[RMDB]
This 177-nucleotide RNA was probed chemically with DMS and 2A3.
RNA sequence: GGGAACGACUCGAGUAGAGUCGAAAACUUCAAAGCAUUUUCCACAGUUGGUAUCGAUAUGAACGCUUUUGUUGUUCUGUGAUGUACUUUUAAUAUUCGUUGGAAGGUUGCUUUCAUGCAUCACGAAGGGAUGCAUGAGCUUCGGCUCAUGCAUCCCAAAAGAAACAACAACAACAAC
Reactivity to DMS in 0.01 (KOAc 150mM, MgCl2 10mM, bicine 150mM(pH8.5), 24C), signal-to-noise 5, nucleotides 027 to 126: c060u000u000c110a070a040a040g020c010a040u000u000u000u000c010c010a050c050a110g000u000u000g010g010u000a040u000c050g010a120u000a040u000g010a030a020c060g010c080u000u010u010u000g010u010u010g010u000u000c030u000g010u000g000a080u000g020u010a050c090u000u000u010u000a060a080u010a100u010u010c120g010u000u000g010g010a010a020g000g020u010u010g010c020u010u000u000c120a140u010g010c060a040u000c050a030c090g010a130a150
Reactivity to 2A3 in 0.01 (KOAc 150mM, MgCl2 10mM, bicine 150mM(pH8.5), 24C), signal-to-noise 2, nucleotides 027 to 126: c010u080u040c050a000a010a010g000c010a040u040u020u020u000c000c000a020c020a070g070u110u090g060g030u090a040u080c030g050a070u050a050u300g030a030a020c030g040c080u000u140u040u220g060u040u050g000u020u000c030u030g050u010g040a040u030g000u050a060c050u040u190u090u130a070a110u160a120u120u160c110g040u060u040g000g010a000a010g020g080u150u110g040c000u090u000u020c020a010u060g000c010a020u060c020a020c080g000a090a000
Background
For DMS the reverse transcriptase was MarathonRT. For 2A3 the reverse transcriptase was SuperScript II with manganese.